Chemical mapping of a 177-nucleotide RNA with 2A3 and DMS.

RNA sequence: GGGAACGACUCGAGUAGAGUCGAAAAAGGCGGGCCUAGCGAACCACCCUGGCCUUUUGGUGAGGCCGGGUGACGACAGAAAAGCUACCCCAGGGAUAACAGAGUUGUCCCCGGCGAGAGUACAUAUCGAUGUAGUGUUUUUCGAAACACUACAUCGAAAAGAAACAACAACAACAAC
Reactivity to 2A3 in 0.01 (KOAc 150mM, MgCl2 10mM, bicine 150mM(pH8.5), 24C), signal-to-noise 3, nucleotides 027 to 126: a000g090g040c050g020g000g080c000c010u010a020g010c000g010a050a040c010c020a000c010c000c060u110g000g010c010c000u030u040u030u120g290g050u300g020a010g000g010c000c000g010g000g000u020g000a020c070g010a000c000a010g220a030a100a000a000g000c000u050a050c010c020c000c010a000g040g000g000a010u030a050a040c070a080g180a030g250u000u020g020u030c000c000c000c010g020g010c030g020a080g000a010g030u080a050c030a070u230a020u100
Reactivity to DMS in 0.01 (KOAc 150mM, MgCl2 10mM, bicine 150mM(pH8.5), 24C), signal-to-noise 2, nucleotides 027 to 126: a040g000g040c000g020g000g000c020c050u000a030g040c030g000a070a090c080c010a060c020c000c000u010g070g000c000c000u010u000u030u070g060g000u000g000a000g000g030c000c010g030g000g070u030g010a030c120g050a110c090a090g010a070a070a160a200g020c000u000a090c020c020c000c040a070g000g010g000a030u000a030a030c030a210g000a090g020u020u000g000u010c010c010c000c100g000g000c160g000a100g000a050g000u020a070c280a110u010a100u020
2A3 is a SHAPE reagent: it acylates the 2'-hydroxyl of flexible nucleotides of all four kinds. It was measured as part of the RMDB libraries RFM100 and RFMREP.